[RMDB]
RNA sequence: GGGAACGACUCGAGUAGAGUCGAAAAUCGUCCUCGAGUUUCUUGAUGGUUCUCCUGCUCUUCCGGAGCCUUCUUUCGAGGUCUUCCGCGUCUUUUCUUGCUUGGAUCCAUUUCUCGAGGACGUCCUCUUCUGAAUAAAGUUCGCUUUAUUCAGAAGAAAAGAAACAACAACAACAAC
Reactivity to 2A3 in 0.01 (KOAc 150mM, MgCl2 10mM, bicine 150mM(pH8.5), 24C), signal-to-noise 4, nucleotides 027 to 126: u070c000g000u000c000c000u000c000g010a000g010u120u210u090c120u230u290g020a010u010g020g000u080u070c050u030c030c010u010g000c010u030c030u150u040c010c000g010g000a010g000c030c000u060u070c020u100u300u170c110g010a000g010g010u000c040u090u000c010c000g020c090g050u040c070u070u190u110u050c070u110u090g010c010u030u070g000g000a030u050c000c000a020u050u070u020c010u000c000g000a000g000g000a000c000g000u000c000c000u000
Reactivity to DMS in 0.01 (KOAc 150mM, MgCl2 10mM, bicine 150mM(pH8.5), 24C), signal-to-noise 2, nucleotides 027 to 126: u050c000g010u000c010c010u020c000g020a030g000u010u020u010c210u000u000g000a020u000g010g010u000u000c060u010c030c050u000g010c020u000c130u000u000c090c030g000g000a060g010c060c000u010u010c100u010u010u010c160g000a010g010g010u000c050u010u000c000c010g030c220g020u000c100u000u000u010u000c130u010u000g000c030u000u000g000g000a050u000c030c020a030u000u000u000c000u000c010g020a000g000g010a020c010g000u000c010c010u000